[RMDB]
RNA sequence: GGGAACGACUCGAGUAGAGUCGAAAAAGGCAUCUAUGUGCCUGCUAAGUUCACAGGAUCGCUGAGAGCCUCCCUCUCCGCCACAUACCUUAACCUGCCUCUGAAGCAACUGCUGCUCAACACGCUCCUUCCCAAGCCAAUUCGUUGGCUUGGGAAGAAAAGAAACAACAACAACAAC
Reactivity to 2A3 in 0.01 (KOAc 150mM, MgCl2 10mM, bicine 150mM(pH8.5), 24C), signal-to-noise 1, nucleotides 027 to 126: a010g050g000c020a070u020c100u270a160u260g080u050g010c100c000u010g000c000u060a170a130g010u120u170c010a000c000a050g080g020a140u110c020g050c080u040g040a020g000a010g110c010c000u000c050c000c000u050c010u000c000c000g010c020c000a030c000a060u150a110c000c010u050u060a080a050c010c040u070g020c020c000u000c020u020g110a040a010g000c030a040a060c060u140g000c010u060g000c030u000c040a010a080c060a010c100g020c000u030c000
Reactivity to DMS in 0.01 (KOAc 150mM, MgCl2 10mM, bicine 150mM(pH8.5), 24C), signal-to-noise 1, nucleotides 027 to 126: a050g010g000c010a010u000c130u010a060u040g010u000g000c190c000u010g000c070u010a080a110g000u000u000c110a060c060a090g000g010a120u020c060g040c050u030g000a200g000a070g010c040c080u000c070c050c040u010c040u000c020c080g020c020c050a070c140a060u000a110c070c030u010u010a020a030c060c030u000g010c000c060u000c000u000g020a090a050g010c080a060a070c060u020g010c060u000g010c000u010c040a030a080c140a060c100g000c060u010c070
Chemical mapping of a 177-nucleotide RNA with 2A3 and DMS. It was measured as part of the RMDB library OK2TRN. For 2A3, 1,010 sequencing reads were counted. The reactions ran in a buffer of 150 mM KOAc, 10 mM MgCl2 and 150 mM bicine (pH 8.5), at 24 C.